[RMDB]
RNA sequence: GGGAACGACUCGAGUAGAGUCGAAAACUCGAGGAGCAUAGAGGCGUGCGACCUCGACAUGAAUCAGCCUCAAUUAGAAGGUACUCGUGAGAGCGAAGUACCGAGAAUUGGUCGACGAUCACCGGCGAUCUUCCGACCUUGAAUUAAGCCGGCAAAAGGUGAGGAUUAUAUUCGUAUAAUCCUCACCAAAAGAAACAACAACAACAAC
Reactivity to DMS in 0.01 (KOAc 150mM, MgCl2 10mM, bicine 150mM(pH8.5), 24C), signal-to-noise 2, nucleotides 027 to 156: c040u000c020g000a060g000g000a300g000c030a060u000a070g020a050g020g010c050g020u000g000c000g010a180c010c050u010c010g000a110c110a080u020g030a180a110u000c080a210g000c000c000u000c030a150a080u000u020a120g000a090a280g030g010u010a000c020u000c010g000u000g020a300g000a300g080c030g000a090a040g060u000a010c010c020g050a100g020a060a110u010u000g020g000u000c020g000a050c140g000a090u000c050a120c010c020g010g020c020g000a030u000c030u010u010c010c020g010a080c030c020u000u000g000a080a150u010u020a050a120g060c020c000g000g060c090a010a030a060a140
Reactivity to 2A3 in 0.01 (KOAc 150mM, MgCl2 10mM, bicine 150mM(pH8.5), 24C), signal-to-noise 3, nucleotides 027 to 156: c000u000c010g010a010g000g000a000g030c010a000u080a080g010a000g010g010c000g000u000g000c020g060a300c010c000u000c010g020a020c030a130u300g120a170a130u100c060a090g000c010c010u020c010a010a050u120u080a060g060a200a050g000g000u000a000c000u000c010g010u010g030a070g020a000g060c010g000a130a020g010u000a000c000c030g020a000g010a030a130u190u140g000g000u000c010g020a020c020g000a000u000c000a020c080c010g010g000c000g000a000u020c000u060u030c100c040g000a000c020c000u040u170g020a010a000u070u100a030a000g000c000c000g030g040c060a080a090a020a000
An RNA of 207 nucleotides, treated with DMS and 2A3 and read out base by base. For 2A3, 3,084 sequencing reads were counted. The reactions ran in a buffer of 150 mM KOAc, 10 mM MgCl2 and 150 mM bicine (pH 8.5), at 24 C. Reactivities are given for positions 27 through 156. The DMS profile rests on 3,110 reads.